[RMDB]
RNA sequence: GGGAACGACUCGAGUAGAGUCGAAAAGGAGGACGAAGCAUAUUUCUGUUUCUGGAGGAUUAUUUAUAAUCUGCCGGAAAGUCUUGCAGGUGGCUGGGAUAUGUUCAGUCUGGUAGAAUUAAGCAUGAAAACGUGUCCUUGUUCGCAAGGACACGAAGAUCUUUAAAGUGUUCGCACUUUAAAGAUCAAAAGAAACAACAACAACAAC
Reactivity to 2A3 in 0.01 (KOAc 150mM, MgCl2 10mM, bicine 150mM(pH8.5), 24C), signal-to-noise 5, nucleotides 027 to 156: g030g010a030g010g010a000c020g030a030a010g020c030a020u030a050u080u110u060c080u100g110u040u040u000c000u020g010g010a060g020g000a000u010u020a020u010u240u020a110u050a040a020u010c010u050g100c010c010g000g020a030a020a020g020u030c060u100u130g040c050a030g020g090u070g040g020c030u050g020g000g010a020u020a000u050g080u100u040c040a020g020u000c020u040g020g020u070a050g080a110a070u160u140a110a000g040c060a030u090g110a020a060a000a040c010g000u000g000u010c000c000u010u000g010u030u040c080g000c110a000a000g000g000a010c000a000c000g000a000a000
Reactivity to DMS in 0.01 (KOAc 150mM, MgCl2 10mM, bicine 150mM(pH8.5), 24C), signal-to-noise 3, nucleotides 027 to 156: g010g020a160g030g000a040c030g000a160a150g020c050a070u000a040u000u000u000c010u010g020u000u000u010c010u010g010g020a040g000g010a000u000u000a010u000u010u010a080u000a090a010u000c000u000g010c000c010g010g010a020a040a050g000u000c040u000u000g050c080a110g020g040u000g030g030c030u010g030g020g030a030u010a030u000g000u010u000c060a210g020u000c010u000g030g010u010a090g000a080a110u000u010a030a080g010c060a110u010g010a040a060a090a190c010g030u000g000u000c000c000u000u000g010u000u020c300g000c020a030a030g000g000a010c000a000c000g000a010a060